Structure probing data (2A3) for a 207-nucleotide construct. The RNA was probed in 150 mM KOAc, 10 mM MgCl2 and 150 mM bicine (pH 8.5) at 24 C.
RNA sequence: GGGAACGACUCGAGUAGAGUCGAAAAGAUUCCUCGUUGUUGAGCGAGGUUUAAACAAAUCGACCACACAAACGUAGAGCCGACUACGGAUUUAUAAAUUAAGGCCUUAAGUGUGAUAAGGAGACAAAAAACGAUGUUGUGUUCGCACAACAUCGAACCACCGAGAUUACUUCGGUAAUCUCGGUGGAAAAGAAACAACAACAACAAC
Reactivity to 2A3 in 0.01 (KOAc 150mM, MgCl2 10mM, bicine 150mM(pH8.5), 24C), signal-to-noise 1, nucleotides 027 to 156: g110a070u150u100c000c000u000c010g000u000u020g030u010u010g000a010g000c000g020a000g000g060u040u150u060a020a050a020c090a010a000a000u000c000g000a000c000c000a000c000a020c020a080a130a030c000g000u000a000g020a010g000c000c010g050a000c000u000a030c000g020g000a000u000u300u020a110u140a090a100a010u130u090a010a020g000g000c030c030u150u270a230a140g020u010g000u000g000a010u010a020a080g100g030a060g040a070c110a080a130a000a000a000a000c010g000a010u000g010u010u010g020u000g030u020u050c140g000c130a000c000a000a000c000a020u000c000g000a000a000